[RMDB]
RNA sequence: GGGAACGACUCGAGUAGAGUCGAAAACAUGCGCCACCACGCCCGGCUAAUUUUUGUACUUUUAGUAGAGAUGGGGUUUUGUCAUGUUGGCCAGGCUGAUCUUGAACUCCUGACCUCAGGUGUCCCCAUACGAGGAACAUUUCGAUGUUCCUCGUAUAAAAGAAACAACAACAACAAC
Reactivity to 2A3 in 0.01 (KOAc 150mM, MgCl2 10mM, bicine 150mM(pH8.5), 24C), signal-to-noise 1, nucleotides 027 to 126: c020a030u070g000c020g020c000c020a060c000c020a030c070g020c000c000c010g070g000c050u060a070a050u050u120u090u050u120g070u120a060c030u030u130u020u050a040g030u050a020g020a030g030a090u070g000g040g060g000u040u030u130u150g070u040c010a040u070g000u060u060g090g000c010c020a030g030g000c060u030g020a070u020c010u160u140g040a060a040c000u010c020c000u040g050a070c020c000u040c010a010g090g020u060g030u050c010c010c000c000
Reactivity to DMS in 0.01 (KOAc 150mM, MgCl2 10mM, bicine 150mM(pH8.5), 24C), signal-to-noise 3, nucleotides 027 to 126: c050a070u000g010c050g000c020c020a050c020c010a080c090g010c030c010c020g020g010c030u010a020a020u000u010u000u000u010g010u000a070c130u010u000u010u010a050g000u000a090g000a070g010a070u000g010g000g000g010u000u010u000u010g010u000c060a030u010g010u000u010g020g000c040c030a040g020g010c100u010g000a060u000c120u000u000g010a080a080c070u000c010c010u000g000a090c070c050u010c040a050g010g010u010g000u000c010c010c010c160
Structure probing data (2A3 and DMS) for a 177-nucleotide construct. It was measured as part of the RMDB library OK2TRN. 2A3 adducts were read by reverse transcription with SuperScript II with manganese. Conditions: 150 mM KOAc, 10 mM MgCl2 and 150 mM bicine (pH 8.5), 24 C.